[RMDB]
Chemical mapping of a 177-nucleotide RNA with DMS. For DMS, 797 sequencing reads were counted. The data come from the RNA Mapping Database (RMDB), library TTRINS. The RNA was probed in 150 mM KOAc, 10 mM MgCl2 and 150 mM bicine (pH 8.5) at 24 C. Reactivities are given for positions 27 through 126.
RNA sequence: GGGAACGACUCGAGUAGAGUCGAAAAGAUAUGGAUACGCAUCGAUCUAACGCUCCGACGAAGGACAUAUAAGCUCGGAAACGAGCUUAUAUGUCCAGAGGAGAGUUAGGGAGCGUAUCCUAAGUCACCAAUUACUCCUCUUCGGAGGAGUAAUUGGAAAAGAAACAACAACAACAAC
Reactivity to DMS in 0.01 (KOAc 150mM, MgCl2 10mM, bicine 150mM(pH8.5), 24C), signal-to-noise 1, nucleotides 027 to 126: g010a130u000a300u000g000g010a030u000a000c050g020c000a300u000c180g010a170u010c020u000a000a020c020g010c000u000c000c010g020a230c300g010a150a060g010g030a010c000a000u010a010u000a020a000g010c000u020c030g010g000a130a060a180c010g010a020g000c000u020u020a000u000a010u000g000u010c000c000a000g000a160g000g030a020g000a020g020u000u000a010g030g010g000a060g000c010g010u000a000u000c000c000u010a000a060g000u000c050a180